[RMDB]
RNA sequence: GGGAACGACUCGAGUAGAGUCGAAAAUAUGUUCUGCAUGAGCUUGCUUGGCUUUUUUGGUGGCAGGGUCAUUUCUUUUGCAAAUUCCAAAAGCCAAUUUUGGAUGCAGCCAUUAGCUGACGCGCGCCUGGCAUUGCUUGACGAUGCCACCAGAGCGCGAAGUACGAGGAUUCGUCCUCGUACUUCGAAAAGAAACAACAACAACAAC
Reactivity to 2A3 in 0.01 (KOAc 150mM, MgCl2 10mM, bicine 150mM(pH8.5), 24C), signal-to-noise 5, nucleotides 027 to 156: u260a060u110g050u060u030c030u040g060c040a060u100g070a050g090c050u100u080g030c040u060u060g100g000c030u090u080u050u030u160u110g020g000u010g020g030c010a010g130g080g000u030c030a040u050u140u180c080u040u190u070u050g000c020a050a120a270u130u000c010c010a010a010a030a030g030c070c100a180a160u080u080u040u070g020g000a030u050g020c010a010g000c020c010a050u100u130a040g020c030u090g080a110c090g060c020g000c000g010c100c000u050g020g000c010a030u020u090g020c020u040u080g010a030c020g040a020u020g030c000c000a000c010c010a020g010a000g030c050g000
Reactivity to DMS in 0.01 (KOAc 150mM, MgCl2 10mM, bicine 150mM(pH8.5), 24C), signal-to-noise 2, nucleotides 027 to 156: u010a090u000g020u000u010c020u020g030c060a120u010g000a140g010c020u000u000g020c050u000u000g020g020c040u000u000u000u000u000u000g010g050u010g030g080c010a060g010g010g040u020c070a100u000u010u010c020u020u000u010u000g030c040a080a050a170u000u010c020c010a000a050a060a100g030c060c190a060a240u000u000u010u000g010g000a070u000g010c060a060g000c230c010a100u000u000a100g030c120u000g000a070c050g000c040g020c030g000c050c010u000g020g030c020a020u010u000g020c050u010u000g000a150c040g000a070u000g000c000c020a010c040c030a040g020a070g030c050g010
This 207-nucleotide RNA was probed chemically with 2A3 and DMS.
Reactivities are given for positions 27 through 156.
Source: RMDB library OK3TST, as collected in RNAgym.
The RNA was probed in 150 mM KOAc, 10 mM MgCl2 and 150 mM bicine (pH 8.5) at 24 C.
For DMS the reverse transcriptase was MarathonRT.
For DMS, 5,631 sequencing reads were counted.
2A3 adducts were read by reverse transcription with SuperScript II with manganese.